[RMDB]
Source information:
Source: RMDB library OK1LIB, as collected in RNAgym. Chemical mapping of a 177-nucleotide RNA with 2A3.

RNA sequence: GGGAACGACUCGAGUAGAGUCGAAAAGUCAACCACAUCGUUAUCCGCUUCCACUAUCUGUUUCUGUGUUAACCCGCCCAGUAUUGACGUUGAAAACACUGGAUUGCAUGGUUCGAGCGUGAAUGACUCCAAGCUCUUCGUUCGCGAAGAGCUUGGAAAAAGAAACAACAACAACAAC
Reactivity to 2A3 in 0.01 (KOAc 150mM, MgCl2 10mM, bicine 150mM(pH8.5), 24C), signal-to-noise 1, nucleotides 027 to 126: g080u080c020a030a000c060c050a040c030a080u090c060g060u060u040a060u010c010c000g020c050u070u030c020c000a020c000u020a060u140c010u030g010u000u070u030c040u000g010u000g000u130u010a020a060c000c000c010g000c000c080c000a000g010u070a120u050u040g040a030c030g090u050u030g100a060a050a000a000c020a010c000u000g020g020a040u030u160g040c020a020u090g040g000u060u060c020g020a000g010c020g000u080g080a030a080u080g000a040c000